About this RNA: This 177-nucleotide RNA was probed chemically with 2A3 and DMS. DMS adducts were read by reverse transcription with MarathonRT. Values cover nucleotides 27 to 126. Source: RMDB library OK2TST, as collected in RNAgym. The reactions ran in a buffer of 150 mM KOAc, 10 mM MgCl2 and 150 mM bicine (pH 8.5), at 24 C.
RNA sequence: GGGAACGACUCGAGUAGAGUCGAAAAGCAAAUGACAGCUGUCGUAAGAUACACAGUAGAGGGAGUUGAUGAAACAUUUGGAUGCGUUGUCAAUUAUGAUUGUGGCUUGAAUUUGCACAAUGGUGAAGCCAGUCCUAGGAUUCGUCCUAGGACUGGCAAAAGAAACAACAACAACAAC
Reactivity to 2A3 in 0.01 (KOAc 150mM, MgCl2 10mM, bicine 150mM(pH8.5), 24C), signal-to-noise 1, nucleotides 027 to 126: g030c000a060a040a030u060g000a020c040a040g000c030u110g020u020c020g060u040a030a030g070a020u070a020c020a000c060a110g070u100a040g020a100g040g080g090a090g000u010u000g000a100u020g020a120a000a000c020a040u150u080u190g180g050a080u050g060c000g000u030u030g030u030c010a070a030u090u050a090u100g130a060u010u170g090u040g130g000c020u080u020g020a020a050u040u060u120g000c070a010c010a010a180u180g230g010u140g010a140a020
Reactivity to DMS in 0.01 (KOAc 150mM, MgCl2 10mM, bicine 150mM(pH8.5), 24C), signal-to-noise 2, nucleotides 027 to 126: g030c070a060a040a020u000g060a300c300a050g010c030u020g020u010c030g000u000a100a060g010a100u000a220c080a030c030a040g000u000a040g020a040g000g010g010a070g010u000u000g040a100u000g020a100a010a050c090a010u000u000u000g030g030a100u010g000c250g040u000u000g000u000c050a070a070u000u000a060u000g010a040u000u000g000u000g000g000c010u000u000g010a050a120u000u000u000g010c010a090c110a060a070u010g020g000u010g020a140a120